[RMDB]
RNA sequence: GGGAACGACUCGAGUAGAGUCGAAAACGUUGCUUUCGAGCAACGAAAAAAGAUAUGGACUCGAACUACAGCCGAAAGGAGCGUUGAAAUCGGAAACGAUGGAGCUCCUAGUAGCUGCUGCGAGUCCUAAGUCAAAAAAUCGCGCUUCGGCGCGAAACUUGAGGCAAGGAUUCGUCCUUGCCUCAAGAAAAGAAACAACAACAACAAC
Reactivity to 2A3 in 0.01 (KOAc 150mM, MgCl2 10mM, bicine 150mM(pH8.5), 24C), signal-to-noise 1, nucleotides 027 to 156: c000g010u000u000g020c010u130u130u180c300g060a020g020c010a000a030c010g080a050a030a000a000a000a000g000a010u070a010u030g010g000a000c000u000c000g050a120a030c160u090a060c190a000g030c060c010g050a060a040a040g000g000a000g030c010g070u170u030g010a110a010a000u000c000g000g020a020a020a060c000g000a010u000g000g030a000g010c010u000c000c000u000a000g000u000a000g000c050u030g000c020u070g020c020g000a000g000u020c000c000u000a010a000g000u000c050a000a000a010a000a230a060u120c060g030c000g020c010u090u030c200g130g000c000g000c000g030a030a070a060